[RMDB]
RNA sequence: GGGAACGACUCGAGUAGAGUCGAAAAGAUAUGGAGAAGAACUUUGAUCAAUCCGUAACAUCCAUCGGAAACGAUGGUGGGAUUGGGAGUUCCUCCUAAGUCAAAGCACGAAGUUCGCUUCGUGCAACUAUGCAUCAACGUUCGCGUUGAUGCAUAGAAAAGAAACAACAACAACAAC
Reactivity to DMS in 0.01 (KOAc 150mM, MgCl2 10mM, bicine 150mM(pH8.5), 24C), signal-to-noise 5, nucleotides 027 to 126: g010a030u000a300u020g000g010a010g010a120a110g010a010a010c000u000u000u010g010a110u010c000a010a010u000c000c000g010u010a050a050c220a030u010c000c000a000u000c010g010g000a120a090a160c010g010a010u010g000g020u000g020g000g000a010u000u000g000g000g000a020g010u000u000c000c000u000c000c000u010a040a120g000u000c040a080a100a120g000c010a000c000g000a010a010g020u000u010c260g000c010u000u000c000g030u000g010c010a010a060
Reactivity to 2A3 in 0.01 (KOAc 150mM, MgCl2 10mM, bicine 150mM(pH8.5), 24C), signal-to-noise 5, nucleotides 027 to 126: g020a030u080a060u180g020g020a020g020a300a070g010a050a030c010u100u150u160g140a190u300c010a020a010u000c000c010g000u030a030a020c030a300u130c010c000a010u000c000g000g020a100a050a040c020g000a010u010g010g000u010g010g010g000a010u010u010g020g000g010a020g000u000u010c000c000u010c000c010u010a160a010g060u040c070a120a030a040g000c000a000c000g000a010a010g020u080u160c270g090c140u000u000c000g000u000g000c000a000a000
The record gives the reactivity of an RNA of 177 nucleotides to DMS and 2A3. The reactions ran in a buffer of 150 mM KOAc, 10 mM MgCl2 and 150 mM bicine (pH 8.5), at 24 C. Source: RMDB library TTRDEL, as collected in RNAgym. Values cover nucleotides 27 to 126. For 2A3 the reverse transcriptase was SuperScript II with manganese.